RNA sequence: GGGAACGACUCGAGUAGAGUCGAAAAGGGUCUGUUCGCAGACCCGAAUAGGGGUCGGAGAAGCACAUCGAUCGCUGAACUACGUCUGAAGCCUCCACGGACGCAGCGGGAGUGCGUAACGACGGAGGCACCCAAUGGAAUUCUCUUCGGAGAAUAAUCUGCCGUUAGGAUUCGUCCUAACGGCAGAAAAAGAAACAACAACAACAAC
Reactivity to 2A3 in 0.01 (KOAc 150mM, MgCl2 10mM, bicine 150mM(pH8.5), 24C), signal-to-noise 1, nucleotides 027 to 156: g000g000g000u030c010u020g010u060u090c220g000c050a000g000a000c000c000c010g000a000a000u000a020g200g060g060g000u010c010g000g030a070g030a160a020g040c000a020c010a080u300c110g080a030u000c000g010c000u020g010a090a060c150u160a080c230g000u000c000u000g020a100a040g020c000c000u000c000c000a040c010g010g000a000c010g010c010a010g000c000g000g000g000a080g000u020g000c000g020u060a110a000c000g010a000c020g000g000a000g000g020c020a010c000c010c000a010a040u170g060g090a050a030u050u000c020u010c000u120u130c290g140g010a020g030a000a000u140a070a070